An RNA of 177 nucleotides, treated with DMS and 2A3 and read out base by base. Conditions: 150 mM KOAc, 10 mM MgCl2 and 150 mM bicine (pH 8.5), 24 C. For 2A3 the reverse transcriptase was SuperScript II with manganese. For 2A3, 4,377 sequencing reads were counted.
RNA sequence: GGGAACGACUCGAGUAGAGUCGAAAAAAGCUCAUUUUCGAAUGAGCUUGAAGCGUGAACGCAGGAUAACGCAGAAACGCGCCGCUGAACGUCCCAAGCGAAAGAUUAAGGUCUUCGGACCUUAAAAUUCAAUCAUAGGUUUCGACCUAUGAUUGAAAAAAGAAACAACAACAACAAC
Reactivity to DMS in 0.01 (KOAc 150mM, MgCl2 10mM, bicine 150mM(pH8.5), 24C), signal-to-noise 6, nucleotides 027 to 126: a010a010g010c000u000c000a010u000u000u010u010c160g010a030a010u000g000a010g000c000u000u010g000a070a090g010c010g000u000g010a150a170c200g000c010a050g020g010a150u010a100a170c120g010c010a060g000a170a140a060c050g010c030g010c090c030g010c000u000g000a130a050c070g000u000c000c000c000a130a070g010c060g000a100a080a090g010a200u000u010a000a010g000g010u000c000u000u010c200g020g000a010c000c010u000u000a000a010a080a120
Reactivity to 2A3 in 0.01 (KOAc 150mM, MgCl2 10mM, bicine 150mM(pH8.5), 24C), signal-to-noise 3, nucleotides 027 to 126: a000a000g010c010u000c010a010u020u020u040u060c110g110a020a000u010g000a000g010c000u000u010g000a040a020g010c000g030u050g040a100a020c040g010c030a020g060g110a170u100a230a040c080g000c030a010g110a050a100a010c010g010c010g030c020c000g000c030u030g040a110a030c020g050u020c000c000c000a020a000g040c040g070a160a050a040g050a010u040u050a020a000g000g000u000c000u020u090c220g050g010a000c000c000u000u000a010a000a000a010